An RNA of 177 nucleotides, treated with 2A3 and DMS and read out base by base. The data come from the RNA Mapping Database (RMDB), library TTRDES. For 2A3 the reverse transcriptase was SuperScript II with manganese.
[RMDB]
RNA sequence: GGGAACGACUCGAGUAGAGUCGAAAAGAUAUGGACCAUCUCCGAAGGCGAUGAAAUGGGAUCGGAAACGAUCCCAUGGAGCCUGAGGAGAGUGGUCCUAAGUCAAAACAGCAUCUUCGGAUGCUGAGUGUGUAGUGUUGUUCGCAACACUACACACAAAAGAAACAACAACAACAAC
Reactivity to 2A3 in 0.01 (KOAc 150mM, MgCl2 10mM, bicine 150mM(pH8.5), 24C), signal-to-noise 1, nucleotides 027 to 126: g020a030u100a040u150g000g000a000c000c000a000u010c000u000c000c000g030a030a030g000g030c000g300a300u000g000a030a040a020u000g030g000g000a010u000c010g040g000a010a070a050c020g000a000u020c030c050c000a010u010g000g010a000g000c000c010u010g010a000g010g050a000g000a000g000u010g010g000u000c000c000u010a010a000g030u000c030a020a010a150a200c000a020g010c010a010u020c000u130u170c300g240g000a020u000g000c010u010g000a070
Reactivity to DMS in 0.01 (KOAc 150mM, MgCl2 10mM, bicine 150mM(pH8.5), 24C), signal-to-noise 2, nucleotides 027 to 126: g000a010u000a300u000g010g000a030c010c010a090u000c000u000c000c000g020a300a000g000g000c020g000a160u020g000a060a120a010u010g010g000g020a020u010c000g000g000a130a110a160c010g010a000u000c000c010c000a000u000g000g000a110g010c000c000u010g010a300g000g010a000g000a030g010u010g000g000u000c000c000u000a010a100g010u030c020a130a060a130a300c050a010g000c000a000u000c000u000u010c250g050g030a000u000g000c000u000g000a070